[RMDB]
Chemical mapping of a 177-nucleotide RNA with 2A3 and DMS.
The data come from the RNA Mapping Database (RMDB), library RFM100.
Values cover nucleotides 27 to 126.

RNA sequence: GGGAACGACUCGAGUAGAGUCGAAAAGCCCCGGCGCCAGCGGCUCCGCGCUUGGCACAACAAUGGUAUGCGUGGUUUGCGGCCCUAAUUUAUUCAGCACGCGACUGCCGCAUCCCGCACGGGAGGCCCCGAGUUGGUAAUUCGUUACCAACUCGGGAAAAGAAACAACAACAACAAC
Reactivity to 2A3 in 0.01 (KOAc 150mM, MgCl2 10mM, bicine 150mM(pH8.5), 24C), signal-to-noise 4, nucleotides 027 to 126: g010c000c000c000c000g070g000c030g010c020c000a030g010c010g080g020c060u010c020c020g020c010g010c050u130u150g040g040c040a010c030a050a160c050a080a120u200g070g040u090a040u040g030c010g030u150g000g000u040u030u190g000c010g000g030c000c000c020u110a130a190u060u190u220a210u100u200c090a000g040c040a040c100g030c030g030a040c040u040g050c040c010g020c000a010u000c010c000c000g010c030a020c040g010g010g010a010g040g000c010
Reactivity to DMS in 0.01 (KOAc 150mM, MgCl2 10mM, bicine 150mM(pH8.5), 24C), signal-to-noise 2, nucleotides 027 to 126: g000c080c000c010c090g010g050c030g040c010c000a090g000c050g000g010c020u020c040c030g010c030g000c010u040u000g010g000c010a110c180a090a140c120a160a200u030g000g010u000a060u000g010c050g060u030g030g000u000u000u010g030c000g000g000c010c240c180u000a030a130u040u000u000a130u030u020c230a050g000c070a100c000g000c020g000a080c100u000g020c020c010g000c010a030u010c040c070c030g020c080a110c060g000g000g020a100g000g040c120

2A3 adducts were read by reverse transcription with SuperScript II with manganese.